[RMDB]
RNA sequence: GGGAACGACUCGAGUAGAGUCGAAAAUUGAGCGUGCAGUUAAAGAGCGUUUGUCUCUGGGCGACCUCGACACACUGAUGCCUCAGGACAUGAUCAACGCCAAGCCUAUUUCGGCUGCGGUGAAAGACGUAGACCGACAAUUCGUUGUCGGUCUACGAAAAGAAACAACAACAACAAC
Reactivity to 2A3 in 0.01 (KOAc 150mM, MgCl2 10mM, bicine 150mM(pH8.5), 24C), signal-to-noise 2, nucleotides 027 to 126: u050u040g000a000g000c040g010u090g080c040a050g030u060u080a130a100a020g030a010g000c120g040u030u060u190g090u020c060u020c070u130g000g000g050c000g040a040c010c000u020c040g080a040c040a010c000a000c110u040g040a080u110g070c010c010u030c000a020g080g030a030c020a100u240g020a080u120c060a040a040c040g020c050c010a030a000g010c000c010u140a220u100u080u150c010g020g000c000u030g010c100g030g000u030g030a160a090a000g040a000
Reactivity to DMS in 0.01 (KOAc 150mM, MgCl2 10mM, bicine 150mM(pH8.5), 24C), signal-to-noise 3, nucleotides 027 to 126: u010u000g000a040g030c090g020u020g010c000a050g020u000u000a090a160a190g000a050g010c120g000u000u000u010g030u000c010u000c170u030g010g030g020c060g000a030c050c000u000c020g000a120c180a090c170a070c050u000g000a120u000g000c080c000u000c050a050g030g010a120c080a070u000g010a110u000c080a050a110c060g000c030c090a110a060g000c000c010u000a200u000u020u010c200g010g010c000u000g000c100g000g000u010g000a060a090a090g000a150
Structure probing data (2A3 and DMS) for a 177-nucleotide construct. DMS (dimethyl sulfate) methylates the pairing face of unpaired adenines and cytosines. Source: RMDB library OK2TST, as collected in RNAgym. For DMS the reverse transcriptase was MarathonRT. 2A3 adducts were read by reverse transcription with SuperScript II with manganese. The RNA was probed in 150 mM KOAc, 10 mM MgCl2 and 150 mM bicine (pH 8.5) at 24 C. For 2A3, 2,019 sequencing reads were counted.